[RMDB]
RNA sequence: GGGAACGACUCGAGUAGAGUCGAAAAUCGUGCUAGUUCGGUACUAUACAGGGAAGGGAAGUCACUCGCAUACGUGUGUGUGCAUUUCUUGCUAUUGCUGCUUAGCUUCUCUAAAACACUGGGCUACGGUUGACAUAGAGUUCGCUCUAUGUCAACCAAAAGAAACAACAACAACAAC
Reactivity to 2A3 in 0.01 (KOAc 150mM, MgCl2 10mM, bicine 150mM(pH8.5), 24C), signal-to-noise 2, nucleotides 027 to 126: u070c020g010u070g060c070u020a000g000u020u040c020g000g030u000a050c020u020a030u050a140c300a070g010g000g030a000a000g000g030g000a010a000g010u000c010a010c000u020c000g000c010a020u030a110c300g080u030g000u030g010u000g000u010g010c030a010u020u000u000c020u020u010g000c000u040a070u140u300g070c110u020g000c000u020u020a000g000c000u020u000c000u000c000u020a030a030a030a050c020a010c000u010g000g010g020c000u030a040c070
Reactivity to DMS in 0.01 (KOAc 150mM, MgCl2 10mM, bicine 150mM(pH8.5), 24C), signal-to-noise 2, nucleotides 027 to 126: u000c150g000u010g020c160u020a020g000u000u000c000g000g040u050a040c140u000a170u000a130c190a050g020g010g000a030a030g000g020g000a010a020g020u000c040a020c060u010c010g000c000a010u000a120c220g070u000g040u000g000u020g000u000g010c060a060u000u000u000c010u010u000g060c000u000a050u000u010g010c300u000g000c040u000u010a030g000c000u000u000c000u000c000u000a070a080a090a130c300a020c020u000g010g010g000c000u000a020c080